RNA sequence: GGGAACGACUCGAGUAGAGUCGAAAAGAAAGAAAGAAGAAAACAAAAACAAUGGAAGCCCUGCCUCUCAUCCAUCCUUGCCGCUCCGUGGCGGCGCCAGUGUGAAUUUGUCAAGCGGACAGCGGAACUCAGUUAGGGGAUUCGUCCCCUAACUGAGAAAAGAAACAACAACAACAAC
Reactivity to 2A3 in 0.01 (KOAc 150mM, MgCl2 10mM, bicine 150mM(pH8.5), 24C), signal-to-noise 2, nucleotides 027 to 126: g090a000a050a020g020a030a120a010g060a060a050g080a060a090a040a000c120a050a120a030a030a000c110a110a110u100g060g050a100a050g010c010c000c000u020g000c010c000u000c000u020c020a090u000c080c000a020u020c000c020u030u140g050c000c000g030c010u020c030c010g070u080g030g020c020g000g000c010g000c020c030a050g000u060g040u010g130a110a140u030u040u080g100u070c000a070a000g020c040g010g030a050c040a040g010c000g020g010a100a090
Reactivity to DMS in 0.01 (KOAc 150mM, MgCl2 10mM, bicine 150mM(pH8.5), 24C), signal-to-noise 2, nucleotides 027 to 126: g000a070a120a130g010a110a050a060g000a080a090g000a080a080a080a090c090a080a150a120a120a070c130a080a110u020g010g010a160a130g000c040c070c000u000g000c010c000u000c010u030c020a040u010c030c020a020u040c040c060u000u010g000c000c010g000c070u000c040c070g020u000g000g090c030g000g000c040g040c080c020a000g040u030g030u020g000a110a140u010u000u030g010u000c000a080a150g030c020g000g000a000c060a060g000c040g000g000a130a150
The record gives the reactivity of an RNA of 177 nucleotides to 2A3 and DMS.
It was measured as part of the RMDB library RFM100.
The reactions ran in a buffer of 150 mM KOAc, 10 mM MgCl2 and 150 mM bicine (pH 8.5), at 24 C.
For DMS, 2,233 sequencing reads were counted.
High 2A3 reactivity points to a flexible backbone, as in loops and unpaired stretches.